RNA sequence: GGGAACGACUCGAGUAGAGUCGAAAAGAUAUGGAUUCUGGUACAGAGCUACCGUCGGAAACGACGGAAUAGCGACGAAGUACGGAAUCCUAAGUCAAAGGGCUCUAGUACUUCGGUACUAGAGCCCCAGGCUGAUUAUGUUCGCAUAAUCAGCCUGAAAAGAAACAACAACAACAAC
Reactivity to 2A3 in 0.01 (KOAc 150mM, MgCl2 10mM, bicine 150mM(pH8.5), 24C), signal-to-noise 1, nucleotides 027 to 126: g020a000u030a030u090g000g000a000u010u060c080u210g260g090u050a010c020a040g190a000g160c000u010a000c000c000g000u000c000g010g010a060a010a020c040g000a010c020g000g000a100a120u080a010g000c050g050a090c100g120a070a030g000u000a020c030g020g010a000a000u000c000c000u010a000a010g000u000c040a110a120a060g000g000g000c000u010c000u010a020g000u000a000c000u080u040c300g090g000u000a010c000u000a010g010a010g000c000c000c000
Reactivity to DMS in 0.01 (KOAc 150mM, MgCl2 10mM, bicine 150mM(pH8.5), 24C), signal-to-noise 2, nucleotides 027 to 126: g000a030u010a150u010g020g010a020u000u020c020u000g010g050u020a030c000a100g000a150g020c000u000a040c000c010g000u000c000g020g000a070a040a120c000g020a020c000g010g000a040a100u000a000g000c010g030a200c300g010a130a140g000u000a030c000g000g010a010a000u000c010c000u000a020a060g000u000c000a100a100a180g030g000g010c000u000c000u000a010g030u000a000c000u010u010c270g030g000u000a000c000u000a000g010a000g020c000c000c000